[RMDB]
RNA sequence: GGGAACGACUCGAGUAGAGUCGAAAAUCAUUGGCUUCCCUGCGCGCUGCGUUGCCUAGGCUUCAGAUGCUUCGUACUGUUGCCAACGUUGCAAUUUCCAAACGCUAAUGCGAAAGUGUGCAAACAAGCCGUACAAUAAAUUCGUUUAUUGUACGGCAAAAGAAACAACAACAACAAC
Reactivity to 2A3 in 0.01 (KOAc 150mM, MgCl2 10mM, bicine 150mM(pH8.5), 24C), signal-to-noise 6, nucleotides 027 to 126: u080c020a030u040u130g050g000c030u020u020c000c000c000u010g000c010g000c000g000c000u060g000c020g050u030u040g000c000c010u040a070g000g010c000u020u020c020a040g040a200u110g080c060u100u140c070g070u090a070c010u020g010u030u010g000c010c010a030a020c040g050u050u060g010c020a030a050u050u090u020c030c020a070a070a030c020g000c040u120a160a060u190g020c010g030a040a010a020g020u020g000u010g030c000a020a090a030c030a090a030
Reactivity to DMS in 0.01 (KOAc 150mM, MgCl2 10mM, bicine 150mM(pH8.5), 24C), signal-to-noise 8, nucleotides 027 to 126: u010c120a140u010u000g010g010c100u000u000c020c010c010u000g010c040g020c050g000c030u010g010c070g010u000u000g020c020c030u000a220g000g010c040u010u000c020a040g010a110u000g010c120u000u010c110g010u000a090c050u010g000u000u000g010c010c020a060a110c240g000u000u000g000c030a050a090u010u000u010c060c060a070a080a110c090g010c040u000a040a100u000g020c040g010a080a060a060g020u010g010u000g010c040a090a080a080c210a070a110

The record gives the reactivity of an RNA of 177 nucleotides to 2A3 and DMS. Reactivities are given for positions 27 through 126. The 2A3 profile rests on 16,809 reads. For 2A3 the reverse transcriptase was SuperScript II with manganese.